[RMDB]
RNA sequence: GGGAACGACUCGAGUAGAGUCGAAAAGAUAUGGAUCACCGAAGAACAAUUGAGGCGUGUGUCGGAAACGACACCGCUAUAUGGGAGGUGAUCCUAAGUCAAAGUUCACUUCUUCGGAAGUGAACAACAAUACCCGGGUGUUCGCACCCGGGUAUUGAAAAGAAACAACAACAACAAC
Reactivity to 2A3 in 0.01 (KOAc 150mM, MgCl2 10mM, bicine 150mM(pH8.5), 24C), signal-to-noise 1, nucleotides 027 to 126: g010a020u000a020u070g000g010a010u000c010a000c010c000g050a200a090g170a300a070c100a110a160u300u210g060a080g000g030c040g010u260g000u000g000u080c010g000g000a000a000a000c000g000a000c000a000c010c000g000c010u010a020u020a010u020g000g030g000a060g010g000u000g000a010u020c000c000u030a000a000g000u000c040a000a150a070g010u010u000c000a000c000u010u000c000u060u090c210g190g000a010a000g050u020g000a000a010c000a000a000
Reactivity to DMS in 0.01 (KOAc 150mM, MgCl2 10mM, bicine 150mM(pH8.5), 24C), signal-to-noise 2, nucleotides 027 to 126: g030a000u000a010u040g000g000a000u000c000a010c000c040g030a180a300g030a130a200c030a050a300u010u010g010a300g000g000c020g030u010g000u000g020u000c000g040g000a020a000a030c000g010a010c000a000c010c000g020c000u000a010u000a020u010g010g000g010a300g010g010u000g010a010u000c000c000u000a000a050g000u000c000a090a080a140g000u000u000c000a000c000u000u000c000u000u010c210g020g000a030a000g020u000g000a000a000c010a070a100
Conditions: 150 mM KOAc, 10 mM MgCl2 and 150 mM bicine (pH 8.5), 24 C. Chemical mapping of a 177-nucleotide RNA with 2A3 and DMS. For 2A3 the reverse transcriptase was SuperScript II with manganese. DMS adducts were read by reverse transcription with MarathonRT.